[RMDB]
RNA sequence: GGGAACGACUCGAGUAGAGUCGAAAAUCGAAGAUCAUGGAAAGAAGAGGGUUGCACACCCAUCGGCUGAGACUUCAGUGGUCCGACAAGUCGGGCCCUCUCAGCCACCGAAGAGACUUACCAACCCCAGUGAUUCUUAUUUCGAUAAGAAUCACUGAAAAGAAACAACAACAACAAC
Reactivity to 2A3 in 0.01 (KOAc 150mM, MgCl2 10mM, bicine 150mM(pH8.5), 24C), signal-to-noise 9, nucleotides 027 to 126: u100c030g040a050a020g060a070u070c050a090u180g070g050a120a090a070g070a100a030g060a120g060g030g020u050u170g070c100a050c010a030c070c010c020a060u090c060g000g000c000u010g000a000g010a050c050u130u030c160a040g010u110g240g000u000c000c010g000a010c080a200a040g140u040c000g000g000g000c000c000c010u000c000u000c010a000g000c000c000a000c010c000g010a130a020g080a000g020a040c010u050u060a060c020c020a050a050c010c000c000
Reactivity to DMS in 0.01 (KOAc 150mM, MgCl2 10mM, bicine 150mM(pH8.5), 24C), signal-to-noise 6, nucleotides 027 to 126: u020c060g010a060a050g000a120u010c080a160u020g020g010a030a040a090g010a080a090g020a140g000g010g010u010u010g000c170a110c180a120c080c010c010a070u020c090g010g030c000u000g000a000g010a060c300u050u040c210a040g010u050g010g010u000c000c000g000a030c080a080a140g020u010c000g000g020g000c000c000c000u000c000u000c010a020g000c020c020a020c070c050g000a120a060g010a080g010a100c080u000u000a140c160c050a050a140c010c010c010